[RMDB]
RNA sequence: GGGAACGACUCGAGUAGAGUCGAAAAUACCGCAGGCCUGCGGUGCGGCAGUGUGGAGACCUGCCGUAAGCCGUGUUGUUUUGACAACCGAGAGAAAGCGUAUGCGGAGGCAGCGCUUUCAGGGUCUAAAAGUAUGGGAUCUUCGGAUCCCAUACAAGCAGGUAUAUAGGUUCGCCUAUAUACCUGCAAAAGAAACAACAACAACAAC
Reactivity to 2A3 in 0.01 (KOAc 150mM, MgCl2 10mM, bicine 150mM(pH8.5), 24C), signal-to-noise 2, nucleotides 027 to 156: u100a000c000c010g000c010a020g040g150c000c060u040g020c020g000g000u010g000c000g000g000c000a020g000u020g040u110g300g080a060g020a110c000c010u010g010c000c000g010u020a040a030g050c060c050g060u030g010u040u000g000u000u040u010u070g040a030c030a060a060c040c020g080a030g000a010g000a180a000a000g000c000g000u060a270u200g020c060g030g070a050g240g000c000a000g010c000g000c000u000u000u010c010a020g030g000g010u010c010u030a030a080a000a040g000u000a000u000g000g000g000a010u000c010u000u060c160g050g000a000u000c000c010c000a000u000a000c000a000a000

The record gives the reactivity of an RNA of 207 nucleotides to 2A3. High 2A3 reactivity points to a flexible backbone, as in loops and unpaired stretches. The 2A3 profile rests on 1,718 reads.